[RMDB]
RNA sequence: GGGAACGACUCGAGUAGAGUCGAAAAGCCUCGGAGCCAAGCGGGAGGGCUCCCGGGGCGCCGCACGGGCGCAGUGCUGCGCGAGACUCUAUGCCCGUGACAGAGUGGUAUCAGAGCAGACUUGCUUAUUCAAAUACAUCUUCGGAUGUAUUUGAAUAAAAGAAACAACAACAACAAC
Reactivity to 2A3 in 0.01 (KOAc 150mM, MgCl2 10mM, bicine 150mM(pH8.5), 24C), signal-to-noise 1, nucleotides 027 to 126: g000c020c000u010c020g000g000a000g000c000c000a120a040g070c080g020g040g030a020g030g010g030c010u030c040c020c000g020g000g000g000c000g020c010c010g000c010a020c030g070g000g010c080g000c050a020g020u040g110c060u080g010c030g020c000g050a090g050a070c000u020c010u030a050u100g000c000c000c020g020u010g010a020c030a030g170a020g040u090g020g000u040a030u140c060a050g020a010g090c020a020g070a130c040u070u070g020c010u050u030
Reactivity to DMS in 0.01 (KOAc 150mM, MgCl2 10mM, bicine 150mM(pH8.5), 24C), signal-to-noise 2, nucleotides 027 to 126: g020c020c000u000c070g010g000a030g000c000c010a080a120g020c050g000g000g010a120g000g000g000c000u000c090c000c050g010g000g010g010c000g010c030c020g010c020a010c010g000g000g030c020g000c040a060g010u000g010c050u000g000c060g010c110g010a120g000a110c000u000c010u000a050u000g020c020c000c010g020u010g000a140c150a060g000a070g000u000g020g000u000a090u000c070a100g010a090g010c040a080g000a100c070u000u010g020c060u000u000
This 177-nucleotide RNA was probed chemically with 2A3 and DMS. For 2A3, 2,394 sequencing reads were counted. Values cover nucleotides 27 to 126.